[RMDB]
RNA sequence: GGGAACGACUCGAGUAGAGUCGAAAAGAAGAGAACUUCGGUUCUCUUCAAAGCUGUUACCCACGCCAAGAAAUCCCGGAACAUUCGCUCGUUAGCGGGAGAAAACCGGGAAGUUCGCUUCCCGGAAGUAACAAAGUAAGUUCGCUUACUUUGUUACAAAAGAAACAACAACAACAAC
Reactivity to DMS in 0.01 (KOAc 150mM, MgCl2 10mM, bicine 150mM(pH8.5), 24C), signal-to-noise 5, nucleotides 027 to 126: g000a020a000g000a020g000a010a010c000u000u010c180g040g010u000u000c000u000c000u000u000c000a040a090a090g020c100u000g000u000u000a110c020c010c010a140c160g000c080c140a080a130g000a070a130a120u000c010c010c000g000g000a040a060c060a150u000u010c160g010c150u000c130g010u000u000a050g010c000g000g000g000a060g020a070a030a100a140c010c000g000g000g010a010a000g010u000u010c210g010c020u000u000c010c000c000g020g010a020a040